An RNA of 207 nucleotides, treated with 2A3 and read out base by base. It was measured as part of the RMDB library OK3TST. Conditions: 150 mM KOAc, 10 mM MgCl2 and 150 mM bicine (pH 8.5), 24 C.
RNA sequence: GGGAACGACUCGAGUAGAGUCGAAAAGUGGGCUAUACAGAAUUUGGUGUACUUAUAACAUGCCAUGUUAAUAGGCUCUCACAAUUUAUUAUGGUCAAAUCACUUUAGUUGUUUAAAAAACAACAUGAGUCACAUGCCUUCUGUCAGUCUGCAGAUACAGUAUCGCACUGUUCGCAGUGCGAUACUGAAAAGAAACAACAACAACAAC
Reactivity to 2A3 in 0.01 (KOAc 150mM, MgCl2 10mM, bicine 150mM(pH8.5), 24C), signal-to-noise 2, nucleotides 027 to 156: g020u010g000g010g030c000u030a040u060a240c020a030g130a050a050u030u080u160g030g000u020g000u080a130c080u140u130a080u040a120a050c090a030u090g170c060c020a020u040g020u060u040a050a120u060a120g060g000c020u000c000u100c000a060c050a120a040u050u100u140a080u140u120a040u090g000g000u040c010a000a050a050u070c020a060c020u040u080u080a070g020u000u010g000u030u060u070a090a170a010a000a000a000c010a000a000c030a030u090g020a020g000u040c010a000c020a070u150g030c000c000u010u000c010u000g000u000c000a070g000u000c010u000g040c010a000g000a030u050a070